[RMDB]
The record gives the reactivity of an RNA of 207 nucleotides to DMS and 2A3. Reactivities are given for positions 27 through 156. Conditions: 150 mM KOAc, 10 mM MgCl2 and 150 mM bicine (pH 8.5), 24 C. 2A3 adducts were read by reverse transcription with SuperScript II with manganese. For DMS, 11,202 sequencing reads were counted.
RNA sequence: GGGAACGACUCGAGUAGAGUCGAAAACGGAAGCAUUAAAACCAUUCGAGCUAGUCAAUGCGUGGCGUGUCUCUCCGCAGCGUGUUGGCGAAUGUAAAGAGUGACUAACCAUGUAGUACCGAGGAUGAUAAGAGCAAUUCGUUCGCGAAUUGCUCAAGUUACGUUGUAAGUUCGCUUACAACGUAACAAAAGAAACAACAACAACAAC
Reactivity to DMS in 0.01 (KOAc 150mM, MgCl2 10mM, bicine 150mM(pH8.5), 24C), signal-to-noise 4, nucleotides 027 to 156: c080g010g000a130a120g010c050a130u010u000a050a130a120a110c040c020a100u000u000c000g010a200g020c050u000a170g010u000c020a020a030u000g010c040g030u010g060g050c020g020u000g030u050c110u000c050u000c170c010g010c010a090g000c010g020u010g030u010u000g000g000c020g000a080a060u000g030u000a060a100a140g000a070g010u000g020a070c040u000a090a130c050c070a080u000g000u000a090g000u000a070c020c030g010a100g020g030a090u000g020a140u010a100a130g000a030g020c000a010a020u000u000c000g040u000u000c300g030c030g010a000a010u000u000g030c000u000c000a000a060
Reactivity to 2A3 in 0.01 (KOAc 150mM, MgCl2 10mM, bicine 150mM(pH8.5), 24C), signal-to-noise 9, nucleotides 027 to 156: c050g020g040a060a020g030c040a030u070u120a070a030a030a070c040c010a030u040u060c070g020a030g040c030u080a010g030u020c010a010a010u010g010c010g010u040g100g000c010g010u080g050u020c020u010c010u000c090c010g000c010a020g000c000g000u020g000u010u010g010g000c010g000a020a010u060g030u070a050a080a040g030a000g010u030g010a030c010u030a050a040c020c020a040u090g040u120a060g020u030a050c020c040g020a040g080g010a040u090g020a020u100a230a140g000a000g000c000a000a000u000u000c010g020u050u070c160g000c010g110a000a000u000u000g000c000u000c000a000a000